The data come from the RNA Mapping Database (RMDB), library M2RFPK. An RNA of 207 nucleotides, treated with 2A3 and read out base by base. For 2A3, 558 sequencing reads were counted.
[RMDB]
RNA sequence: GGGAACGACUCGAGUAGAGUCGAAAAAUACUUCUCCGGAUGGCGCGUUGCAGUCCAACAAGAUCCAGGGACUGUACAGAAUUUUCCUAUACCUCGAGUCGGGUUUGGAAUCUAAGGUUGACUCGCUAAAACUUUACGUGGUUCGCCACGUAAAGAAUCGUUGCAAGAAGUUCGCUUCUUGCAACGAAAAAGAAACAACAACAACAAC
Reactivity to 2A3 in 0.01 (KOAc 150mM, MgCl2 10mM, bicine 150mM(pH8.5), 24C), signal-to-noise 1, nucleotides 027 to 156: a000u150a010c010u000u040c060u000c010c000g060g000a000u050g030g080c030g000c020g180u060u040g000c000a020g020u070c010c000a030a080c010a140a120g200a130u070c000c040a070g050g000g000a020c050u000g000u010a050c070a000g300a140a030u020u040u010u000c000c000u020a020u020a120c000c010u000c060g000a010g010u010c000g000g010g000u080u140u000g030g000a020a050u000c020u090a120a120g160g050u080u140g020a000c000u000c020g040c000u020a000a000a000a170c000u000u040u040a000c010g000u000g010g010u020u030c170g020c020c000a010c000g000u000a000a000a000g000a000a000
The reactions ran in a buffer of 150 mM KOAc, 10 mM MgCl2 and 150 mM bicine (pH 8.5), at 24 C.